Structure probing data (2A3) for a 177-nucleotide construct. Source: RMDB library OK1LIB, as collected in RNAgym. For 2A3, 586 sequencing reads were counted. The RNA was probed in 150 mM KOAc, 10 mM MgCl2 and 150 mM bicine (pH 8.5) at 24 C.
RNA sequence: GGGAACGACUCGAGUAGAGUCGAAAAAAGCGCUCCAUGUUCACUAUCCCAGAGUGGAUCGCACGUACGCCAACAGACUGUUUCAUGCUGUGUCUUCGCGCUAUACCUAUCUUUCGUAGGUGCACGAGUGAUACACGCCCUUCGGGGCGUGUAUCACAAAAGAAACAACAACAACAAC
Reactivity to 2A3 in 0.01 (KOAc 150mM, MgCl2 10mM, bicine 150mM(pH8.5), 24C), signal-to-noise 2, nucleotides 027 to 126: a080a000g070c070g020c020u030c000c000a050u060g070u080u040c110a000c030u070a230u020c000c060c040a000g010a030g060u060g010g000a090u020c020g010c030a010c080g000u060a010c090g060c030c030a010a060c000a090g040a000c030u130g150u070u070u100c040a070u130g090c020u040g020u000g030u110c030u010u000c020g070c010g000c020u120a120u070a050c000c000u020a020u110c070u060u290u080c170g000u050a000g000g020u000g000c020a000c060g020a030